[RMDB]
The data come from the RNA Mapping Database (RMDB), library TTRDES.
This 177-nucleotide RNA was probed chemically with DMS.
For DMS, 1,340 sequencing reads were counted.
The RNA was probed in 150 mM KOAc, 10 mM MgCl2 and 150 mM bicine (pH 8.5) at 24 C.
For DMS the reverse transcriptase was MarathonRT.
RNA sequence: GGGAACGACUCGAGUAGAGUCGAAAAGAUAUGGAACCCACAGAGCGACGAUCGUGCGGGUCGGAAACGACCUCACGGGAGCUCGUGGGUUCCUAAGUCAAAAGGUCUCGAGUUCGCUCGAGACCAACAUCCGUGGAUUGUUCGCAAUCCACGGAUGAAAAGAAACAACAACAACAAC
Reactivity to DMS in 0.01 (KOAc 150mM, MgCl2 10mM, bicine 150mM(pH8.5), 24C), signal-to-noise 1, nucleotides 027 to 126: g000a020u000a020u010g000g000a010a000c000c000c000a010c020a100g050a000g000c000g070a070c300g000a000u000c000g010u020g020c270g000g020g030u000c020g010g010a020a000a030c000g040a010c000c000u000c000a000c000g020g020g020a010g010c000u010c000g030u000g000g000g000u000u000c000c010u000a000a020g000u000c010a070a060a210a200g010g020u000c070u010c000g010a050g010u000u020c240g000c000u000c000g000a000g000a000c000c010a000a080